[RMDB]
RNA sequence: GGGAACGACUCGAGUAGAGUCGAAAAGCAGCUAACUGUCUUGGAUCUGCAUCCAGGAGCCGGAAAAACCAGGAGAGUUCUUCCUGAAAUAGUCCGUGAAGCCAUAAAAAAGAGACUCCGGACAGUGGAGUUUUUCGUUAUUCGUAACGAAAAACUCAAAAGAAACAACAACAACAAC
Reactivity to DMS in 0.01 (KOAc 150mM, MgCl2 10mM, bicine 150mM(pH8.5), 24C), signal-to-noise 2, nucleotides 027 to 126: g000c130a150g000c100u010a000a080c030u000g010u040c000u010u040g030g000a110u010c000u010g010c060a070u000c110c160a090g040g030a050g000c100c010g070g040a000a040a110a160a100c300c000a010g000g000a010g000a300g000u000u040c220u060u010c010c020u000g000a020a100a070u000a130g000u000c000c000g060u060g000a000a130g010c000c140a060u030a000a050a180a160a090a240g000a060g010a060c080u000c000c000g000g010a030c010a020g000u040g010
Reactivity to 2A3 in 0.01 (KOAc 150mM, MgCl2 10mM, bicine 150mM(pH8.5), 24C), signal-to-noise 2, nucleotides 027 to 126: g070c030a010g000c100u140a030a000c020u020g020u000c000u090u300g010g000a010u000c020u080g040c080a090u050c040c030a030g030g040a010g100c020c010g030g020a020a050a050a010a000c070c000a000g020g000a030g010a010g050u130u070c000u140u000c060c000u010g030a120a020a000u150a050g060u000c000c020g050u110g080a100a000g030c020c010a090u300a060a140a020a030a020a010g060a010g000a030c060u020c010c000g010g020a020c010a010g010u030g030